Background: An RNA of 177 nucleotides, treated with DMS and 2A3 and read out base by base. Source: RMDB library OK2TST, as collected in RNAgym. For DMS the reverse transcriptase was MarathonRT. Conditions: 150 mM KOAc, 10 mM MgCl2 and 150 mM bicine (pH 8.5), 24 C.
RNA sequence: GGGAACGACUCGAGUAGAGUCGAAAACGAGAGCCAGGAUAACAUCUACAUUCGCUACUAGAUUCGCAAUUGCAAGAUCUACAGUCAUAGCCAAUUGUGUCGCUGCAGUAUGUUUAUGCGGUGACCCGAACAGUCUCCGUUUCGACGGAGACUGUUCAAAAGAAACAACAACAACAAC
Reactivity to DMS in 0.01 (KOAc 150mM, MgCl2 10mM, bicine 150mM(pH8.5), 24C), signal-to-noise 2, nucleotides 027 to 126: c100g030a140g040a190g000c020c040a080g000g010a080u010a060a110c040a120u010c070u010a020c150a100u000u010c090g000c070u000a070c100u000a100g010a070u000u010c070g000c090a070a040u000u000g010c050a080a120g000a050u000c020u000a050c080a060g010u010c010a030u010a080g020c050c060a010a090u000u000g030u000g070u000c020g010c020u000g000c010a000g000u000a120u010g000u000u000u030a090u020g030c020g010g000u000g000a030c020c080c160
Reactivity to 2A3 in 0.01 (KOAc 150mM, MgCl2 10mM, bicine 150mM(pH8.5), 24C), signal-to-noise 2, nucleotides 027 to 126: c010g010a010g010a010g100c000c000a020g070g000a030u040a140a030c030a100u000c050u050a020c030a120u020u080c010g010c000u040a040c020u020a030g050a140u110u130c090g000c050a030a180u110u090g000c040a070a060g020a070u000c000u040a000c080a030g020u020c020a070u090a030g000c030c020a030a050u150u070g040u050g030u020c000g020c010u030g000c000a010g010u210a070u170g210u100u300u030a090u030g000c020g000g010u010g000a000c000c030c000